This 177-nucleotide RNA was probed chemically with DMS and 2A3. The reactions ran in a buffer of 150 mM KOAc, 10 mM MgCl2 and 150 mM bicine (pH 8.5), at 24 C. Values cover nucleotides 27 to 126. The DMS profile rests on 916 reads. Source: RMDB library OK2TST, as collected in RNAgym. The 2A3 profile rests on 634 reads.
RNA sequence: GGGAACGACUCGAGUAGAGUCGAAAACAAAGAAAGAAUGUGAGUGUGAUCACCUAGGCACUGCCGUUUGCGGGGGUGUUAAAGCUGUGAUUUAAAUCGCAUUUAUGGGUGAGAUCUGUACAAAUCGAUGCUGACCUACGUUCGCGUAGGUCAGCAUAAAAGAAACAACAACAACAAC
Reactivity to DMS in 0.01 (KOAc 150mM, MgCl2 10mM, bicine 150mM(pH8.5), 24C), signal-to-noise 1, nucleotides 027 to 126: c060a100a050a090g010a100a090a120g000a060a120u010g010u000g000a030g010u010g020u000g000a050u000c010a010c000c000u000a120g000g050c000a040c020u000g000c020c030g020u000u010u020g030c030g040g000g010g000g020u000g030u000u000a030a080a080g000c240u000g010u020g030a030u000u010u000a070a170a100u000c040g010c020a000u000u000u000a140u000g000g000g000u010g040a070g000a020u010c000u000g010u000a030c100a010a060a140u000c100g010
Reactivity to 2A3 in 0.01 (KOAc 150mM, MgCl2 10mM, bicine 150mM(pH8.5), 24C), signal-to-noise 1, nucleotides 027 to 126: c020a000a070a040g290a020a090a010g180a050a080u080g020u020g060a000g000u040g060u030g000a000u010c000a010c010c000u050a020g020g000c020a010c020u150g110c000c020g030u070u230u270g200c120g000g020g000g000g000u010g000u040u080a070a150a000g050c080u070g000u000g020a020u000u000u260a110a260a030u020c000g020c000a000u060u100u100a050u080g000g000g030u040g010a050g000a050u000c010u000g010u020a020c020a010a010a140u160c050g070